[RMDB]
RNA sequence: GGGAACGACUCGAGUAGAGUCGAAAACGACCAUGACCGGGCGCAUCGUGGACAGUUAUACGAAUAUCGCAACCGUCAAGCUUUUCUCGCAUUCAAGCCGCGAGGAAACCUAUGUUCGCGAAAGCCAGUCCGAUUACUGAUUCGUCAGUAAUCGGACAAAAGAAACAACAACAACAAC
Reactivity to 2A3 in 0.01 (KOAc 150mM, MgCl2 10mM, bicine 150mM(pH8.5), 24C), signal-to-noise 2, nucleotides 027 to 126: c030g060a050c020c020a050u080g060a050c060c070g150g030g010c010g000c020a040u020c000g040u040g000g000a030c040a030g030u110u090a130u040a170c060g030a100a040u140a060u230c090g000c090a060a070c040c010g050u070c090a080a000g000c010u000u000u050u000c000u010c020g000c020a020u140u160c050a090a090g090c090c030g000c020g020a000g000g020a000a010a020c010c010u120a120u130g040u030u030c010g020c010g070a050a030a010g040c000c040a010
Reactivity to DMS in 0.01 (KOAc 150mM, MgCl2 10mM, bicine 150mM(pH8.5), 24C), signal-to-noise 2, nucleotides 027 to 126: c200g010a150c050c030a090u030g030a160c060c110g000g030g010c040g000c110a150u000c070g020u000g020g000a040c030a030g000u010u000a160u010a040c010g000a060a100u000a120u010c150g050c110a070a060c180c080g050u000c100a070a040g050c200u010u010u000u000c010u000c000g060c000a070u010u000c300a130a150g010c300c170g030c000g000a010g010g020a000a010a000c180c000u010a070u000g000u000u000c040g030c020g000a070a070a300g020c020c100a130

Notes
The record gives the reactivity of an RNA of 177 nucleotides to 2A3 and DMS. The 2A3 profile rests on 1,787 reads. It was measured as part of the RMDB library OK2TST. Values cover nucleotides 27 to 126.